[RMDB]
RNA sequence: GGGAACGACUCGAGUAGAGUCGAAAAAAAGUUUUGUGUACAACACCUACGAGUUUCCGUUUUGGCACAAUAUUCAAUUUCAUUCGAUCGCGCACGAAUGUUACGUUUUGUAUGCAAUCGACGACACGACCGCUGUGCAAUGGCCGAAUACUAACCCACCGAAUAGCUGUUUCGACAGCUAUUCGGUAAAAGAAACAACAACAACAAC
Reactivity to 2A3 in 0.01 (KOAc 150mM, MgCl2 10mM, bicine 150mM(pH8.5), 24C), signal-to-noise 2, nucleotides 027 to 156: a040a000a000g110u100u030u020u000g080u000g010u090a110c040a270a080c030a120c020c010u080a100c070g030a070g070u060u060u030c060c020g000u050u080u030u140g090g000c030a040c030a120a050u130a100u170u100c100a020a100u060u080u090c000a010u020u000c000g190a220u040c040g040c010g040c150a030c020g010a040a020u010g000u020u070a030c080g000u030u010u070u100g050u060a120u090g000c040a060a080u070c060g060a020c000g020a000c020a020c100g100a050c000c030g030c080u050g000u000g020c010a050a040u030g020g000c000c010g000a020a020u020a070c010u000a000a050c000c000c000